[RMDB]
RNA sequence: GGGAACGACUCGAGUAGAGUCGAAAAACGCAUCAUACGUGAUGCGAGAACUACAGUUCCGCUCCUCUAGCACACGGAGGUCAAUUGGGUGCGACCCCCCCCUCUCCCGUGGGUCAACGGGAACCAAAAAAGACCCUUUAGUUCGCUAAAGGGUCAAGAUAAGAUAGCUGUUCGCAGCUAUCUUAUCAAAAGAAACAACAACAACAAC
Reactivity to 2A3 in 0.01 (KOAc 150mM, MgCl2 10mM, bicine 150mM(pH8.5), 24C), signal-to-noise 4, nucleotides 027 to 156: a000c000g000c000a010u000c010a010u040a140c190g140u060g020a020u040g000c040g000a060g030a010a040c110u250a100c040a080g020u020u010c010c020g030c030u050c020c010u010c030u040a040g040c010a010c000a020c060g000g020a010g010g030u060c050a040a070u110u130g090g000g000u030g020c000g190a250c000c000c000c000c000c000c000c000u040c010u000c010c000c010g000u000g000g000g010u090c030a010a010c000g000g000g020a000a010c010c010a010a020a070a080a010a000g010a000c000c000c020u000u000u000a010g010u020u060c200g000c130u000a000a000a000g000g000g000u000c000a000a000
Reactivity to DMS in 0.01 (KOAc 150mM, MgCl2 10mM, bicine 150mM(pH8.5), 24C), signal-to-noise 2, nucleotides 027 to 156: a130c020g020c000a000u020c020a090u010a150c270g070u000g020a030u000g000c000g020a110g010a080a050c060u010a080c070a090g010u020u010c000c060g000c040u000c000c000u010c050u000a110g000c060a070c020a110c050g000g000a030g000g020u000c070a070a110u010u020g000g000g020u020g010c050g010a300c000c000c000c020c000c010c000c000u000c080u000c000c020c050g060u000g020g010g010u010c160a030a040c050g040g010g040a030a090c120c030a000a050a090a100a130a200g010a020c000c000c000u000u010u000a020g020u000u020c300g000c010u000a010a000a020g030g010g030u000c000a000a020